[RMDB]
RNA sequence: GGGAACGACUCGAGUAGAGUCGAAAAGCGGAGAUGCUCCCAGAAGGGACGGCAGCAGUCCUGAUCGUCGAGUUCUACGCCGACGACAUCGCAGACGGCAAGCGGAAGGUCGCGAACUUGCUUGCCGAGCAUAUCAUAGGUUCGCCUAUGAUAUGCUAAAAGAAACAACAACAACAAC
Reactivity to DMS in 0.01 (KOAc 150mM, MgCl2 10mM, bicine 150mM(pH8.5), 24C), signal-to-noise 9, nucleotides 027 to 126: g010c060g000g010a140g000a080u020g010c050u000c010c000c020a170g010a140a140g000g000g010a030c050g020g020c060a070g010c070a140g010u000c010c000u000g000a130u010c010g010u000c020g010a150g000u020u020c140u010a080c150g020c040c000g010a030c000g000a040c090a060u020c080g000c090a120g000a300c010g000g000c010a010a020g000c030g010g010a110a110g010g000u010c060g000c110g010a050a130c030u010u030g010c000u000u000g000c000c000g000
Reactivity to 2A3 in 0.01 (KOAc 150mM, MgCl2 10mM, bicine 150mM(pH8.5), 24C), signal-to-noise 9, nucleotides 027 to 126: g040c030g050g080a130g010a100u140g030c020u030c010c000c010a040g130a090a130g030g010g000a010c060g050g060c050a040g010c030a020g080u010c000c010u040g040a140u020c010g010u010c010g010a060g190u110u120c100u180a050c140g010c020c000g010a010c000g010a010c010a030u100c060g030c070a040g050a130c010g000g000c000a000a000g000c010g140g170a090a030g040g040u110c050g020c070g140a050a050c020u050u120g000c000u000u000g000c000c000g000